[RMDB]
RNA sequence: GGGAACGACUCGAGUAGAGUCGAAAACAUACAUUCCUACGGUUUGUCCACAACUUCCAGAGCUGAAGAGUAGCUCAAGGACAUCAAAGGGCAGAGGCCCCUAGGAAGGGCUGAGCCACAAUGAAGCCGUACUAAUGCGUUUCGACGCAUUAGUACGAAAAGAAACAACAACAACAAC
Reactivity to 2A3 in 0.01 (KOAc 150mM, MgCl2 10mM, bicine 150mM(pH8.5), 24C), signal-to-noise 9, nucleotides 027 to 126: c050a060u300a030c030a090u030u040c000c010u020a090c060g060g020u050u100u110g030u060c030c010a100c040a180a100c080u150u040c020c040a040g010a000g010c010u040g070a180a050g080a160g250u230a020g020c000u020c030a040a060g020g010a000c000a020u050c020a030a140a100g020g000g000c040a050g010a010g260g020c010c020c020c000u090a140g170g230a100a030g010g000g000c010u060g000a000g010c000c020a020c010a030a030u090g020a040a010g030c040
Reactivity to DMS in 0.01 (KOAc 150mM, MgCl2 10mM, bicine 150mM(pH8.5), 24C), signal-to-noise 4, nucleotides 027 to 126: c120a130u010a130c230a230u000u000c000c020u000a040c160g000g020u010u000u000g000u000c000c050a130c210a080a100c160u000u040c060c070a130g000a050g010c010u020g000a060a170g030a300g030u050a020g050c000u000c010a160a140g010g000a050c080a050u000c050a040a100a300g000g000g020c000a040g010a190g000g000c000c000c000c000u000a100g010g050a150a130g000g000g000c010u000g010a300g020c000c000a040c010a050a160u020g000a090a110g000c060

Chemical mapping of a 177-nucleotide RNA with 2A3 and DMS.
For 2A3 the reverse transcriptase was SuperScript II with manganese.
The data come from the RNA Mapping Database (RMDB), library OK1LIB.
DMS adducts were read by reverse transcription with MarathonRT.
Conditions: 150 mM KOAc, 10 mM MgCl2 and 150 mM bicine (pH 8.5), 24 C.